[RMDB]
RNA sequence: GGGAACGACUCGAGUAGAGUCGAAAAGCGUACAGGAUCAGUGUGAUCGUACACGUCUGAGUACACAUGUCUAGGAGCUGCUAGCGAUCCGUGCUAGCUAGCGAUCACGAGUAUCAUGCAUGAGCGCACUAAUAUGACUUUUCGAAGUCAUAUUAGUAAAAGAAACAACAACAACAAC
Reactivity to 2A3 in 0.01 (KOAc 150mM, MgCl2 10mM, bicine 150mM(pH8.5), 24C), signal-to-noise 9, nucleotides 027 to 126: g020c010g010u050a020c010a050g050g030a030u040c030a060g050u020g010u010g300a060u050c030g010u040a020c050a010c090g060u000c030u050g060a040g120u180a020c100a010c030a130u260g030u040c040u060a050g030g050a110g080c030u020g000c000u030a000g000c010g060a080u060c100c070g050u110g000c000u000a000g000c010u010a010g000c000g010a010u010c010a010c030g020a010g030u150a020u070c040a030u090g090c040a070u090g070a020g060c030g000c020
Reactivity to DMS in 0.01 (KOAc 150mM, MgCl2 10mM, bicine 150mM(pH8.5), 24C), signal-to-noise 9, nucleotides 027 to 126: g010c030g020u000a060c030a190g000g010a020u000c030a300g010u010g020u000g000a040u000c070g010u010a140c110a050c170g000u000c030u010g000a140g010u010a040c070a130c180a090u010g010u000c040u000a190g000g000a170g010c060u000g000c000u000a010g000c010g010a120u010c200c250g010u010g000c010u000a020g000c010u000a030g010c010g000a040u000c030a030c020g000a200g010u010a030u000c020a040u000g010c090a090u010g010a140g010c040g010c090
Conditions: 150 mM KOAc, 10 mM MgCl2 and 150 mM bicine (pH 8.5), 24 C. Structure probing data (2A3 and DMS) for a 177-nucleotide construct. The 2A3 profile rests on 89,466 reads. Source: RMDB library OK2TRN, as collected in RNAgym. For DMS, 88,457 sequencing reads were counted.